RNA sequence: GGGAACGACUCGAGUAGAGUCGAAAAUUUACAAGUGUCCGAGUUGUAAUUUGUAGAACUGUUAUCCGCGCUGGACCAUGUACAAGUCUGUUGAAAAGCAGCAUCAUUGAAGGUGAAAAUCCUGUAGACUUCAACCGUUCUUCGGAACGGUUGAAGUAAAAGAAACAACAACAACAAC
Reactivity to DMS in 0.01 (KOAc 150mM, MgCl2 10mM, bicine 150mM(pH8.5), 24C), signal-to-noise 1, nucleotides 027 to 126: u000u000u040a020c040a000a080g050u000g020u010c000c000g040a140g000u110u040g040u000a090a030u000u010u020g090u000a020g040a090a260c000u010g000u010u010a050u000c050c030g070c000g000c090u000g000g000a130c030c130a020u000g060u000a080c130a070a080g020u020c080u000g000u020u000g020a100a050a230a070g050c000a020g010c000a240u040c060a100u070u000g000a130a060g010g000u090g000a000a090a010a070u000c030c000u000g000u030a100g020